The data come from the RNA Mapping Database (RMDB), library TTRDEL. An RNA of 177 nucleotides, treated with 2A3 and DMS and read out base by base.
RNA sequence: GGGAACGACUCGAGUAGAGUCGAAAAGAUAUGGAAUACCGCCCGUAUUGUCAGGGGCUCGGAAACGAGCCUCCUUGGAUUUAUACGUAACAAGUAUUCCUAAGUCAAACGAUGGUUCGCCAUCGAAGAUUUCUAGAAACUUCGGUUUCUAGAAAUCAAAAGAAACAACAACAACAAC
Reactivity to 2A3 in 0.01 (KOAc 150mM, MgCl2 10mM, bicine 150mM(pH8.5), 24C), signal-to-noise 2, nucleotides 027 to 126: g000a020u080a020u130g010g000a000a000u000a050c000c010g040c090c030c000g000u020a030u040u120g020u030c000a000g020g000g000g030c010u010c000g020g070a050a040a050c010g010a000g000c000c010u090c000c030u040u140g070g020a010u030u300u080a020u040a010c000g040u120a040a170c120a170a000g000u000a000u000u010c000c000u040a160a050g060u040c060a110a090a030c030g000a010u010g000g070u080u130c300g040c080c000a000u000c000g010a050a010
Reactivity to DMS in 0.01 (KOAc 150mM, MgCl2 10mM, bicine 150mM(pH8.5), 24C), signal-to-noise 3, nucleotides 027 to 126: g010a050u000a300u010g020g000a030a010u000a000c010c040g020c300c180c000g000u000a010u000u000g000u010c010a080g000g010g020g020c000u010c000g010g000a080a090a140c010g000a010g010c010c010u010c000c020u000u000g030g010a070u000u000u000a000u000a000c030g010u000a060a120c160a200a060g000u000a000u000u000c000c010u000a060a120g020u000c040a080a090a200c010g020a010u000g000g000u000u000c290g010c010c010a010u000c000g000a060a130